[RMDB]
RNA sequence: GGGAACGACUCGAGUAGAGUCGAAAACUUUCACAUGGAAAUGGGAAUAUAAUAAAUGUCCUGCAGGUGAUUGGGGCUGUAGCAAUUUUAUUGAAGAUUAAAGUUUGAUUGACCUUUGUUAGGGUGACUUGAAAAGAAUCUUCGGAUUCUUUUCAAGAAAAGAAACAACAACAACAAC
Reactivity to 2A3 in 0.01 (KOAc 150mM, MgCl2 10mM, bicine 150mM(pH8.5), 24C), signal-to-noise 6, nucleotides 027 to 126: c000u000u040u040c040a060c030a120u100g050g100a050a100a100u070g020g020g040a070a020u100a020u050a130a080u080a070a090a060u100g030u060c010c000u020g010c030a020g050g100u090g070a140u080u120g060g000g050g000c020u030g020u040a020g000c040a080a060u030u070u060u060a080u060u140g080a100a090g040a070u080u170a080a040a070g060u050u090u080g080a130u040u060g050a070c000c000u080u040u050g090u090u090a050g000g010g040u020g040a030
Reactivity to DMS in 0.01 (KOAc 150mM, MgCl2 10mM, bicine 150mM(pH8.5), 24C), signal-to-noise 4, nucleotides 027 to 126: c050u000u010u010c010a080c030a020u010g000g030a060a140a040u010g010g000g010a040a050u000a180u010a130a080u020a030a060a060u010g000u010c200c020u000g010c050a020g000g000u010g010a200u030u000g010g010g000g000c030u000g000u000a040g000c060a050a030u010u020u000u020a040u000u010g000a110a060g020a100u020u010a040a050a050g000u010u000u010g000a090u010u010g000a090c020c000u020u010u030g000u000u010a060g000g020g000u000g010a120
The record gives the reactivity of an RNA of 177 nucleotides to 2A3 and DMS. For 2A3 the reverse transcriptase was SuperScript II with manganese. Source: RMDB libraries RFM100 and RFMREP, as collected in RNAgym.